[RMDB]
RNA sequence: GGGAACGACUCGAGUAGAGUCGAAAAUUUUACUGCUGCAUUCCACCUUGCCCCCAAACUGCUUACCGAGUAAUAAGGUUUUUGUUUUCCGUUACACACCCUGGGCAUGAAAACAAAAUGCAGUUUAAGUCGAGUAGUAUUUCGAUACUACUCGACUAAAAGAAACAACAACAACAAC
Reactivity to DMS in 0.01 (KOAc 150mM, MgCl2 10mM, bicine 150mM(pH8.5), 24C), signal-to-noise 2, nucleotides 027 to 126: u000u010u010u000a150c160u020g000c040u020g010c030a090u000u000c060c070a090c080c050u000u000g010c020c030c010c110c060a050a020a020c080u000g020c030u000u000a090c030c020g020a220g020u020a080a070u000a070a190g000g010u000u010u030u000u000g030u000u000u000u010c010c300g000u000u000a100c090a120c130a050c040c040c040u000g000g000g000c040a040u000g000a000a000a030a000c040a010a020a050a060u000g010c020a000g020u000u000u000a080